[RMDB]
RNA sequence: GGGAACGACUCGAGUAGAGUCGAAAAAGAGAGAGGAGGGUGAGACAUACUAUCUUCAGAGUGGUGAGAGAUGAGGUUAGAAAGCCAUAUGAUGUCUGGUCAACAAGAAUGAAAGUUAUAUAGAUGCACAAUAGCGUAGAUUCGUCUACGCUAUUGUAAAAGAAACAACAACAACAAC
Reactivity to 2A3 in 0.01 (KOAc 150mM, MgCl2 10mM, bicine 150mM(pH8.5), 24C), signal-to-noise 4, nucleotides 027 to 126: a000g110a000g010a000g010a030g050g020a020g010g000g030u050g050a040g040a010c010a030u140a090c040u050a050u100c030u030u080c050a030g040a030g090u060g020g050u060g030a040g000a000g000a040u090g020a030g010g050u070u050a070g080a110a060a010g020c020c010a050u060a080u190g080a020u040g050u030c040u040g000g020u020c020a030a040c010a020a090g090a090a030u140g050a140a040a020g020u110u010a040u010a010u050a140g130a080u120g040c060
Reactivity to DMS in 0.01 (KOAc 150mM, MgCl2 10mM, bicine 150mM(pH8.5), 24C), signal-to-noise 9, nucleotides 027 to 126: a080g010a100g000a110g010a080g010g000a080g000g010g020u010g000a080g010a060c100a070u000a090c100u010a070u000c070u000u010c090a080g010a100g020u000g010g010u010g010a100g010a060g010a080u010g010a050g010g010u000u000a080g010a070a090a120g000c040c050a050u000a100u000g010a060u010g010u010c030u000g000g000u000c060a050a060c080a040a070g010a080a060u010g010a050a050a070g010u000u000a050u010a120u010a080g000a100u010g020c190